[RMDB]
RNA sequence: GGGAACGACUCGAGUAGAGUCGAAAAAGGGCGAGUCGACCUCUCCAUCGGCACGAGGACGUGCCUGGUUUUGAGUGGGGGAGGAUGUUACGGACAAAUUCCGUAACCGUGUGAGGCCAACAUCAAAGAUGCGUACCUAGCUGCGUUUCAACCUGCGGUACAAAUCCUCGUUCGCGAGGAUUUGUACAAAAGAAACAACAACAACAAC
Reactivity to 2A3 in 0.01 (KOAc 150mM, MgCl2 10mM, bicine 150mM(pH8.5), 24C), signal-to-noise 1, nucleotides 027 to 156: a030g020g040g000c050g020a040g030u060c030g090a120c020c020u000c000u000c000c040a090u120c110g060g000c010a000c000g090a240g050g100a050c030g000u010g000c000c000u020g000g010u060u180u000u100g120a130g020u060g000g000g020g000g000a000g030g000a010u050g000u040u000a000c010g010g020a030c240a130a140a270u200u020c000c000g010u000a030a000c000c010g080u080g030u040g040a030g050g030c030c000a000a020c030a090u150c140a110a050a060g040a030u090g060c000g030u080a050c000c040u000a070g030c060u020g020c000g060u030u030u000c050a100a000c000c040u150g000c010g050
The record gives the reactivity of an RNA of 207 nucleotides to 2A3. Conditions: 150 mM KOAc, 10 mM MgCl2 and 150 mM bicine (pH 8.5), 24 C. Values cover nucleotides 27 to 156. It was measured as part of the RMDB library VIROID.